The data come from the RNA Mapping Database (RMDB), library VIROID. Chemical mapping of a 177-nucleotide RNA with DMS and 2A3. For DMS, 10,377 sequencing reads were counted. The RNA was probed in 150 mM KOAc, 10 mM MgCl2 and 150 mM bicine (pH 8.5) at 24 C. Reactivities are given for positions 27 through 126. For 2A3 the reverse transcriptase was SuperScript II with manganese. DMS adducts were read by reverse transcription with MarathonRT. For 2A3, 9,415 sequencing reads were counted.
[RMDB]
RNA sequence: GGGAACGACUCGAGUAGAGUCGAAAAUGGGUUCGCCUACAAGAACGUACGGUGUUGAGGCCCUGUCCGCUGCUGCGCUGCCACCUACUCUUCGCGCCGCUAGUCGAGCAGACUCCGGGUGGAGCCCGAUUAUACAGAACUUCGGUUCUGUAUAAUCAAAAGAAACAACAACAACAAC
Reactivity to DMS in 0.01 (KOAc 150mM, MgCl2 10mM, bicine 150mM(pH8.5), 24C), signal-to-noise 7, nucleotides 027 to 126: u010g010g010g020u010u000c050g000c010c010u000a060c060a120a120g010a100a120c170g010u010a050c130g010g010u000g020u010u010g010a090g010g010c040c040c020u000g000u000c030c030g000c070u000g000c070u000g000c070g010c020u000g010c030c040a070c050c030u000a100c110u010c030u000u000c090g010c040g000c050c030g010c060u010a050g010u000c030g000a120g000c080a090g000a070c050u000c170c090g010g000g020u000g010g010a060g010c030c040c060
Reactivity to 2A3 in 0.01 (KOAc 150mM, MgCl2 10mM, bicine 150mM(pH8.5), 24C), signal-to-noise 5, nucleotides 027 to 126: u100g010g020g020u070u080c040g000c010c000u030a040c040a110a120g120a300a030c100g030u090a030c110g000g040u080g080u120u190g070a100g080g000c040c000c000u010g040u020c000c010g020c060u070g010c010u040g000c020g020c020u090g090c010c010a060c020c020u080a090c020u030c020u140u110c050g020c020g030c030c030g010c040u050a030g040u160c020g030a030g020c020a000g020a060c020u040c070c080g050g000g020u040g060g000a010g010c000c010c010